Source: RMDB library TTRDEL, as collected in RNAgym.
An RNA of 177 nucleotides, treated with 2A3 and DMS and read out base by base.
DMS adducts were read by reverse transcription with MarathonRT.
RNA sequence: GGGAACGACUCGAGUAGAGUCGAAAAGAUAUGGAGGCUGCUUUUGACGAGCAUCACAUCGGAAACGAUGUACGUGAUGCUCGAUAAGCAGCUCCUAAGUCAAAAGACUCACCUUCGGGUGAGUCAACUGGUUACAGUUGUUCGCAACUGUAACCAGAAAAGAAACAACAACAACAAC
Reactivity to 2A3 in 0.01 (KOAc 150mM, MgCl2 10mM, bicine 150mM(pH8.5), 24C), signal-to-noise 1, nucleotides 027 to 126: g040a050u100a110u150g000g010a030g260g250c010u020g060c040u080u060u130u300g270a140c050g000a000g000c000a000u010c000a000c000a020u010c010g020g040a050a080a030c060g000a010u020g080u300a120c210g050u080g000a010u010g000c000u000c000g010a000u000a000a000g010c010a000g000c000u010c000c000u010a060a010g040u000c020a050a010a100a100g010a000c000u010c010a000c050c010u030u150c300g110g000g000u020g000a000g000u000c000a010a010
Reactivity to DMS in 0.01 (KOAc 150mM, MgCl2 10mM, bicine 150mM(pH8.5), 24C), signal-to-noise 2, nucleotides 027 to 126: g000a040u010a300u020g000g000a030g010g010c010u000g000c010u010u000u020u000g000a210c140g010a000g010c000a010u000c000a000c000a040u000c000g010g020a130a100a090c000g000a020u020g010u020a060c240g010u000g000a000u000g010c020u000c000g000a010u010a010a020g010c000a000g000c000u030c010c000u020a040a210g000u030c060a090a050a100a210g010a000c000u000c000a000c010c000u000u000c240g000g030g040u000g000a020g000u000c000a000a060
Values cover nucleotides 27 to 126. Values are in units of 0.01, from 0 to 300, in steps of 10. The RNA was probed in 150 mM KOAc, 10 mM MgCl2 and 150 mM bicine (pH 8.5) at 24 C.